An RNA of 177 nucleotides, treated with 2A3 and read out base by base.
[RMDB]
RNA sequence: GGGAACGACUCGAGUAGAGUCGAAAAACAAUCCAUUGAACUUCGGUGCAGACAUCGUUGUCCACUCCGCUACAAAGUACAUCAACGGUCACUCAGACGUUGUGCUCGGUGUCCUGGCCACUAAUAAGACGUCGUGCUAUUUCGAUAGCACGACGUCAAAAGAAACAACAACAACAAC
Reactivity to 2A3 in 0.01 (KOAc 150mM, MgCl2 10mM, bicine 150mM(pH8.5), 24C), signal-to-noise 1, nucleotides 027 to 126: a000c100a030a000u070c080c030a090u100u230g120a100a070c070u170u130c170g060g000u010g000c000a000g030a000c000a000u000c020g080u140u040g070u000c000c000a030c020u000c040c040g010c000u010a040c100a040a150a000g000u010a070c000a100u080c020a080a040c090g000g080u080c000a000c040u060c010a010g070a190c040g000u000u010g000u020g000c010u000c000g030g030u040g000u000c000c010u020g010g020c000c000a000c040u080a050a140u250a070a000

For 2A3 the reverse transcriptase was SuperScript II with manganese.